Chemical mapping of a 207-nucleotide RNA with 2A3 and DMS. 2A3 adducts were read by reverse transcription with SuperScript II with manganese. The DMS profile rests on 7,426 reads. 2A3 is a SHAPE reagent: it acylates the 2'-hydroxyl of flexible nucleotides of all four kinds. For DMS the reverse transcriptase was MarathonRT.
[RMDB]
RNA sequence: GGGAACGACUCGAGUAGAGUCGAAAAUGCGUAAAUCAUAAAUCCGUGAUUUCAUUAAGAAUUUAUUUGUCACAGUCAAAGCGUGCAAUAGGGCCAAGCGUGACGCAUGAUCCGAUUAGAGCGCGGAUUCGGCUCACUGAUAAGCCGUCUUUGGUUAUACCAACUUAUACUUCGGUAUAAGUUGGUAAAAAGAAACAACAACAACAAC
Reactivity to 2A3 in 0.01 (KOAc 150mM, MgCl2 10mM, bicine 150mM(pH8.5), 24C), signal-to-noise 6, nucleotides 027 to 156: u070g020c010g050u080a020a070a070u080c030a040u100a110a120a020u050c050c020g010u020g020a060u040u190u120c090a050u140u200a120a080g030a120a120u190u180u080a120u130u170u190g100u090c040a030c030a090g040u040c040a040a040a030g020c020g040u080g010c070a090a120u070a220g010g010g000c020c010a040a010g070c040g060u050g050a020c040g020c030a010u070g020a020u000c020c010g030a030u040u110a110g030a020g040c070g010c000g010g000a020u040u020c030g010g000c010u020c020a060c030u060g030a090u040a200a030g000c000c000g060u080c010u030u020u040g040g000u050u010a040
Reactivity to DMS in 0.01 (KOAc 150mM, MgCl2 10mM, bicine 150mM(pH8.5), 24C), signal-to-noise 3, nucleotides 027 to 156: u010g010c080g000u000a050a060a100u000c040a060u000a050a050a030u000c040c020g040u000g020a080u000u000u000c090a100u010u010a070a160g000a080a050u000u010u000a060u000u000u000g020u000c040a080c030a080g020u010c030a060a130a130g010c030g040u000g000c050a050a180u000a120g000g010g000c020c020a030a170g010c050g000u000g010a100c090g020c040a100u000g000a050u000c010c020g000a140u010u010a100g010a090g010c100g010c020g000g010a170u000u000c040g020g030c010u000c010a170c080u000g010a100u000a050a070g020c000c020g020u000c030u000u000u010g010g010u010u000a180